[RMDB]
RNA sequence: GGGAACGACUCGAGUAGAGUCGAAAACAAACGAUCGAGCGCCCGCCUUGCCUGUUGGGCAUUCACCAAAUCCAUAUUAAUGGCGCGCGCAUGCUCGAUAGCCUCGGUAACGGCCUUUUUGGUUACCCACGUACUCAUGAUUCGUCAUGAGUACGUGAAAAGAAACAACAACAACAAC
Reactivity to DMS in 0.01 (KOAc 150mM, MgCl2 10mM, bicine 150mM(pH8.5), 24C), signal-to-noise 4, nucleotides 027 to 126: c050a070a140a110c240g010a040u000c010g020a040g020c020g000c040c060c020g010c010c050u000u000g000c030c010u000g020u010u030g020g010g000c110a060u000u010c100a120c040c060a090a100a100u010c020c020a040u000a030u000u010a090a100u010g020g000c030g010c280g000c120g030c040a040u010g030c000u000c010g000a020u010a110g000c020c010u010c100g000g000u000a020a020c030g000g000c030c110u010u000u000u010u020g040g010u000u000a040c010c010
Reactivity to 2A3 in 0.01 (KOAc 150mM, MgCl2 10mM, bicine 150mM(pH8.5), 24C), signal-to-noise 6, nucleotides 027 to 126: c030a010a100a020c090g060a020u010c010g010a010g000c010g020c020c030c020g000c010c020u040u080g010c010c010u180g120u290u190g060g020g000c060a040u100u150c060a080c050c030a050a080a060u080c030c020a060u070a070u180u260a140a070u140g010g000c010g000c010g000c020g000c060a050u170g000c000u010c000g000a010u010a020g010c000c010u040c060g000g000u010a020a010c020g010g040c020c030u150u270u080u180u190g090g010u020u010a010c000c000